Chemical mapping of a 177-nucleotide RNA with 2A3 and DMS. The 2A3 profile rests on 5,874 reads. DMS adducts were read by reverse transcription with MarathonRT. For DMS, 4,214 sequencing reads were counted.
[RMDB]
RNA sequence: GGGAACGACUCGAGUAGAGUCGAAAAGUCGAUCGUCAGCACUACGACUGAUCUAAAGACGCUUGAGUCGAGCGAUAGAUCUGUGUGAGACAUUCUCGCACGUAGUGGGCUCGAUCGAGAAUGUCUCGCAGUGGUCUGUAUUCGUACAGACCACUGCAAAAGAAACAACAACAACAAC
Reactivity to 2A3 in 0.01 (KOAc 150mM, MgCl2 10mM, bicine 150mM(pH8.5), 24C), signal-to-noise 4, nucleotides 027 to 126: g040u010c010g000a020u010c000g050u030c020a020g020c010a030c020u030a010c020g070a060c050u030g000a000u000c000u010a040a060a070g200a060c020g010c030u070u110g160a110g170u250c080g060a020g010c020g030a060u040a080g040a030u020c040u060g090u010g000u020g050a000g010a010c050a080u180u040c010u000c000g000c020a040c010g010u010a010g020u020g030g100g000c030u010c030g020a030u010c000g000a000g010a010a030u040g020u000c000u000c040
Reactivity to DMS in 0.01 (KOAc 150mM, MgCl2 10mM, bicine 150mM(pH8.5), 24C), signal-to-noise 4, nucleotides 027 to 126: g010u000c030g010a020u000c030g000u000c070a210g000c040a040c040u000a020c010g010a250c130u000g010a030u000c010u000a050a100a160g010a090c020g010c010u000u000g010a120g010u000c090g000a060g000c040g010a220u000a040g010a030u000c030u000g010u010g000u000g010a010g000a100c160a110u010u000c010u000c010g010c090a090c020g010u000a020g030u000g000g010g010c150u000c030g000a040u010c000g000a020g010a040a030u020g000u000c010u000c010